[RMDB]
RNA sequence: GGGAACGACUCGAGUAGAGUCGAAAAUUAGGCAGGUUUUUUGACAGCUGUCUUCUGCAGAAGGGGUUGGGAGGUUGCUGACCUGACUCUGGUUCUUCAGCACAAGCCAGGAGAUCUAUGUACCAACUAUGUACGUUACAUUCGUGUAACGUACAUAAAAAGAAACAACAACAACAAC
Reactivity to DMS in 0.01 (KOAc 150mM, MgCl2 10mM, bicine 150mM(pH8.5), 24C), signal-to-noise 7, nucleotides 027 to 126: u010u010a050g000g010c030a040g000g000u000u000u010u010u010u000g010a110c110a150g020c040u000g020u000c030u000u000c050u000g020c070a070g010a110a080g000g010g010g010u000u000g000g010g010a100g010g020u000u000g010c050u000g010a070c050c030u000g000a050c040u010c060u000g000g010u000u000c070u000u000c040a090g010c160a060c160a070a070g000c030c020a060g000g010a080g000a070u010c040u000a060u010g010u010a160c050c040a070a110c210
Reactivity to 2A3 in 0.01 (KOAc 150mM, MgCl2 10mM, bicine 150mM(pH8.5), 24C), signal-to-noise 3, nucleotides 027 to 126: u100u040a030g020g000c000a000g080g000u050u060u040u120u270u240g160a080c050a040g030c060u020g020u040c000u050u030c030u070g090c040a030g040a120a020g050g020g000g020u080u030g020g040g010a040g020g020u060u090g000c040u050g030a040c000c000u010g000a010c030u000c010u060g080g000u020u030c030u050u050c030a030g010c050a030c020a100a030g000c000c020a040g060g010a030g000a040u000c030u070a090u140g070u050a050c030c000a030a020c040
The record gives the reactivity of an RNA of 177 nucleotides to DMS and 2A3. The reactions ran in a buffer of 150 mM KOAc, 10 mM MgCl2 and 150 mM bicine (pH 8.5), at 24 C. For DMS, 10,318 sequencing reads were counted. 2A3 is a SHAPE reagent: it acylates the 2'-hydroxyl of flexible nucleotides of all four kinds.